[RMDB]
RNA sequence: GGGAACGACUCGAGUAGAGUCGAAAAGACUUAACUUCCGCAGCGACAACAGAGACGCCGGCGUGGUUGUCGCGGUGUCUGCAGUGCAUCCCUGGAACGGUGCUGCGCGCACUCGUCGACGCAUACGCCAUCCAUGAUCCUUCGGGAUCAUGGAUGGAAAAGAAACAACAACAACAAC
Reactivity to 2A3 in 0.01 (KOAc 150mM, MgCl2 10mM, bicine 150mM(pH8.5), 24C), signal-to-noise 4, nucleotides 027 to 126: g020a020c070u110u140a080a030c010u080u020c030c000g000c020a020g030c010g050a050c010a160a010c010a060g130a030g020a090c040g020c050c060g080g000c010g040u060g020g050u110u100g000u020c000g000c000g000g000u010g000u000c030u050g000c000a000g010u030g030c020a150u300c050c000c000u090g050g040a070a030c000g030g000u030g010c010u030g000c010g010c020g000c000a000c000u210c040g180u130c000g050a020c000g000c040a040u040a140c040g000
Reactivity to DMS in 0.01 (KOAc 150mM, MgCl2 10mM, bicine 150mM(pH8.5), 24C), signal-to-noise 2, nucleotides 027 to 126: g000a080c110u040u010a080a030c050u010u000c220c000g020c020a170g000c000g000a060c060a090a050c150a120g020a140g000a120c120g000c050c090g010g030c010g000u020g010g000u020u000g050u000c040g010c010g000g040u000g000u000c070u010g000c030a000g000u000g000c030a070u050c020c000c000u060g000g000a070a120c140g000g000u020g000c020u000g020c020g000c300g040c040a030c000u020c010g000u010c010g030a100c020g000c150a070u010a090c110g000
Source information
The record gives the reactivity of an RNA of 177 nucleotides to 2A3 and DMS. 2A3 adducts were read by reverse transcription with SuperScript II with manganese. For 2A3, 2,520 sequencing reads were counted. The RNA was probed in 150 mM KOAc, 10 mM MgCl2 and 150 mM bicine (pH 8.5) at 24 C. For DMS the reverse transcriptase was MarathonRT.